[RMDB]
RNA sequence: GGGAACGACUCGAGUAGAGUCGAAAAUAGUGCACAAUCAAAAUCCGACCCCAGCAUUAGCCACGGGGUAGGUGUUCCUCUGGAGGAAGGCAGGAAUUAUUCUUCUCCCACCUGUUGGGUAAAGCAAUCUACAGAUAGUCUUCGGACUAUCUGUAGAAAAAGAAACAACAACAACAAC
Reactivity to DMS in 0.01 (KOAc 150mM, MgCl2 10mM, bicine 150mM(pH8.5), 24C), signal-to-noise 2, nucleotides 027 to 126: u000a030g020u000g020c040a110c120a040a080u040c160a090a050a060a160u010c000c000g040a070c020c000c000c010a170g050c050a200u000u000a050g030c070c110a090c230g000g000g010g020u000a000g020g000u000g010u000u010c000c010u000c100u000g000g000a100g010g000a060a060g000g010c100a030g000g000a060a130u000u010a100u010u000c040u000u000c070u000c000c000c000a080c080c040u000g000u020u000g000g000g000u000a080a050a080g010c150a110a140
Chemical mapping of a 177-nucleotide RNA with DMS.
The data come from the RNA Mapping Database (RMDB), library RFMREP.
The reactions ran in a buffer of 150 mM KOAc, 10 mM MgCl2 and 150 mM bicine (pH 8.5), at 24 C.